The record gives the reactivity of an RNA of 177 nucleotides to 2A3. The reactions ran in a buffer of 150 mM KOAc, 10 mM MgCl2 and 150 mM bicine (pH 8.5), at 24 C. It was measured as part of the RMDB library OK1LIB.

[RMDB]
RNA sequence: GGGAACGACUCGAGUAGAGUCGAAAAACUUGAGCGGACAGGGACUUUCGCGAGAUUCACCCGGAUCAGCGUCGUGCAGAUCGGCUGGGCACUGCGUCGCUAUCGCCGGGAGACGCUGCGCCUGGUCCCGCACCGAAAUCUUCGGAUUUCGGUGCGGAAAAGAAACAACAACAACAAC
Reactivity to 2A3 in 0.01 (KOAc 150mM, MgCl2 10mM, bicine 150mM(pH8.5), 24C), signal-to-noise 1, nucleotides 027 to 126: a020c080u070u060g010a020g060c040g000g000a000c000a060g000g000g070a130c000u020u170u050c040g000c020g000a060g010a100u060u050c000a090c000c020c030g060g050a130u070c000a030g000c000g050u030c080g010u070g030c030a060g020a200u120c130g000g000c050u080g000g000g000c070a010c020u070g000c020g010u020c000g040c110u140a050u150c090g040c040c020g050g000g000a020g000a000c020g030c000u040g000c000g020c000c000u050g000g000u000c000